Chemical mapping of a 177-nucleotide RNA with DMS and 2A3. The DMS profile rests on 5,825 reads. For 2A3, 18,770 sequencing reads were counted.
[RMDB]
RNA sequence: GGGAACGACUCGAGUAGAGUCGAAAAUGCGACUGUUAGAUUGCAAGCUGGUUCUAACACCGAGUUUGCCUCUAAUUCCUCGGUGUUGUCACUUGUUAACUUCACCGUUGAUCCUCAAAAAGCUUAUCUAUAGAAUGUAGUUCGCUACAUUCUAUAGAAAAGAAACAACAACAACAAC
Reactivity to DMS in 0.01 (KOAc 150mM, MgCl2 10mM, bicine 150mM(pH8.5), 24C), signal-to-noise 5, nucleotides 027 to 126: u010g020c050g010a080c300u000g000u000u000a010g010a090u000u010g000c010a020a030g010c160u000g010g000u000u000c110u010a050a040c090a020c000c000g010a020g010u000u000u000g010c090c180u000c060u010a060a090u000u000c110c010u000c020g010g010u000g010u000u000g010u000c030a050c070u000u000g000u000u000a050a050c020u000u000c020a040c030c020g020u010u000g000a100u010c010c010u040c210a050a080a110a080a100g000c050u000u000a080u000
Reactivity to 2A3 in 0.01 (KOAc 150mM, MgCl2 10mM, bicine 150mM(pH8.5), 24C), signal-to-noise 8, nucleotides 027 to 126: u090g010c020g020a020c030u020g020u030u010a020g010a170u020u130g010c000a010a000g020c070u020g020g040u130u050c070u140a040a020c020a010c050c000g000a000g020u040u070u080g040c020c000u050c020u050a090a100u100u070c010c010u000c000g000g000u010g010u010u000g020u020c010a010c050u030u050g030u070u050a020a010c000u020u020c010a000c010c010g000u000u030g020a050u020c000c010u080c050a070a090a030a020a020g030c030u040u030a030u060